An RNA of 207 nucleotides, treated with 2A3 and DMS and read out base by base.
RNA sequence: GGGAACGACUCGAGUAGAGUCGAAAAGACUGAUUCGUCAGUCCGGAAGGGGUCGCAAAAAUGUUGUCAGCGUGCGCUCUGAAGCCUCCACGGAGCGACCCACGCUUGGAUUUACGCCAAUGCGACGGAGGCACCCGAAACACGCGUUCGCGCGUAACGAAAAAUGGGGAUUCGUCCCCAUUUUUCGAAAAGAAACAACAACAACAAC
Reactivity to 2A3 in 0.01 (KOAc 150mM, MgCl2 10mM, bicine 150mM(pH8.5), 24C), signal-to-noise 3, nucleotides 027 to 156: g000a010c000u010g000a050u110u130c200g050u020c070a000g000u000c000c040g100g060a080a080g160g030g050g010u010c000g000c050a030a050a060a070a070u150g040u160u120g170u250c110a010g000c010g010u020g020c020g010c010u000c010u020g020a060a010g000c000c000u010c000c010a030c010g010g020a020g010c030g010a060c050c120c010a000c010g000c000u040u120g120g020a180u210u200u190a080c100g000c000c010a030a050u090g000c000g010a020c030g020g000a000g010g000c000a030c000c020c010g070a090a090a030c110a020c040g030c020g020u060u090c110g000c000g020c020g160u080a070a080
Reactivity to DMS in 0.01 (KOAc 150mM, MgCl2 10mM, bicine 150mM(pH8.5), 24C), signal-to-noise 1, nucleotides 027 to 156: g000a010c010u000g000a030u000u010c300g040u000c000a000g000u000c000c030g010g010a240a110g040g000g020g010u020c010g040c030a000a090a080a130a070u020g020u030u010g020u000c000a060g030c020g030u010g010c020g030c040u000c000u000g010a050a070g000c000c000u000c010c000a300c000g000g000a020g020c000g000a140c060c050c060a050c040g010c010u010u010g000g020a180u000u000u020a110c070g000c010c040a080a130u010g010c020g030a120c070g010g030a080g070g030c030a070c030c030c010g000a120a090a110c000a010c010g000c010g010u010u000c170g070c000g000c020g010u000a070a130
Overview:
The data come from the RNA Mapping Database (RMDB), library RNAMAK. For 2A3, 2,029 sequencing reads were counted. DMS adducts were read by reverse transcription with MarathonRT. The reactions ran in a buffer of 150 mM KOAc, 10 mM MgCl2 and 150 mM bicine (pH 8.5), at 24 C.